RNA sequence: GGGAACGACUCGAGUAGAGUCGAAAACGCCAUGCGCUUAGUCAGUAGGGCCUGGUGCGCAGCCACAAACGACGGUGCAGUCACCGCCCGACUGCCCAAGUUUGCAUCAGGUGCGCGCACAUGGUGAGAGACAUGGCAUGUUCGCAUGCCAUGUCUCAAAAGAAACAACAACAACAAC
Reactivity to DMS in 0.01 (KOAc 150mM, MgCl2 10mM, bicine 150mM(pH8.5), 24C), signal-to-noise 1, nucleotides 027 to 126: c100g040c030c030a060u000g000c030g020c000u000u010a160g010u020c110a100g020u000a140g000g000g010c050c020u010g000g050u000g000c070g020c070a150g000c010c010a100c060a010a030a050c010g000a170c300g010g020u020g030c000a000g000u000c000a130c070c160g000c080c080c080g000a000c000u000g000c000c020c020a280a260g010u000u000u010g010c070a060u010c100a080g000g010u000g000c060g000c100g000c020a050c000a010u010g010g000u000g000a250